Structure probing data (2A3 and DMS) for a 177-nucleotide construct. Conditions: 150 mM KOAc, 10 mM MgCl2 and 150 mM bicine (pH 8.5), 24 C. Values cover nucleotides 27 to 126. DMS adducts were read by reverse transcription with MarathonRT. 2A3 adducts were read by reverse transcription with SuperScript II with manganese.

[RMDB]
RNA sequence: GGGAACGACUCGAGUAGAGUCGAAAAUAGGGCGAAUAACCGCAUCGCGGUUAUCCGCCGGCUGUGCAGGGCAGCGGCCCUUGCCCGGAUUUUGGGCAGCGUGCACCAGCAGGCGACAAAUCGGCAUGGCAUAUCUAUAGUUCGCUAUAGAUAUGCCAAAAGAAACAACAACAACAAC
Reactivity to 2A3 in 0.01 (KOAc 150mM, MgCl2 10mM, bicine 150mM(pH8.5), 24C), signal-to-noise 1, nucleotides 027 to 126: u120a010g080g040g000c020g000a020a000u010a030a000c000c030g020c090a210u250c280g050c000g020g020u010u010a000u020c000c000g030c020c010g020g000c010u010g030u040g060c030a030g050g040g060c000a090g150c050g160g040c050c000c000u000u040g020c000c000c000g040g060a180u010u120u110u280g030g010g000c060a010g040c080g070u070g000c080a070c060c010a010g020c000a000g080g030c030g010a070c220a030a110a030u030c040g030g000c070a030u110
Reactivity to DMS in 0.01 (KOAc 150mM, MgCl2 10mM, bicine 150mM(pH8.5), 24C), signal-to-noise 2, nucleotides 027 to 126: u030a110g030g020g040c000g000a030a000u000a010a000c000c000g000c010a150u000c200g000c000g030g000u000u000a000u000c000c020g040c020c000g000g020c010u000g010u020g000c020a100g010g000g020c010a080g020c050g000g000c000c000c000u000u000g020c010c010c030g000g020a230u000u010u000u040g020g000g000c000a040g000c080g010u010g020c030a080c060c090a070g000c020a190g000g010c030g000a100c120a020a090a110u010c040g010g000c120a200u000

2A3 is a SHAPE reagent: it acylates the 2'-hydroxyl of flexible nucleotides of all four kinds.